An RNA of 177 nucleotides, treated with 2A3 and DMS and read out base by base. The RNA was probed in 150 mM KOAc, 10 mM MgCl2 and 150 mM bicine (pH 8.5) at 24 C.

RNA sequence: GGGAACGACUCGAGUAGAGUCGAAAAAGCACGAGACGAAUACUCUCUCGAAAAGGCGAGAAGAGAUGCGAAAUAAAUAAAGUAUCUCGAUCGCCGAAUAAAAGUCGAUCGUGCGAAGAGAGAGGAAGGGUACAAACUAGUUCGCUAGUUUGUACCCAAAAGAAACAACAACAACAAC
Reactivity to 2A3 in 0.01 (KOAc 150mM, MgCl2 10mM, bicine 150mM(pH8.5), 24C), signal-to-noise 3, nucleotides 027 to 126: a000g010c000a000c000g060a070g170a050c020g040a030a010u110a150c000u040c000u030c000u010c020g040a040a000a080a060g000g000c000g000a010g010a220a050g010a070g000a000u000g020c050g110a040a090a060u290a070a080a010u140a040a100a010g010u000a010u000c020u020c000g000a010u000c000g000c000c000g010a000a000u040a010a040a020a000g020u020c000g040a130u050c020g000u000g000c000g000a080a010g020a010g000a000g000a000g040g020a000a050
Reactivity to DMS in 0.01 (KOAc 150mM, MgCl2 10mM, bicine 150mM(pH8.5), 24C), signal-to-noise 4, nucleotides 027 to 126: a110g000c000a000c020g000a070g000a020c040g000a090a100u020a160c010u010c000u000c010u000c000g050a110a060a170a150g000g000c000g000a020g000a120a100g000a010g010a000u000g000c000g000a030a110a210u030a080a130a100u040a050a100a210g010u000a000u000c010u000c000g010a300u000c000g020c000c000g000a020a040u030a070a050a030a050g000u020c040g000a160u000c000g020u010g000c010g000a090a030g000a010g000a010g000a010g000g010a140a110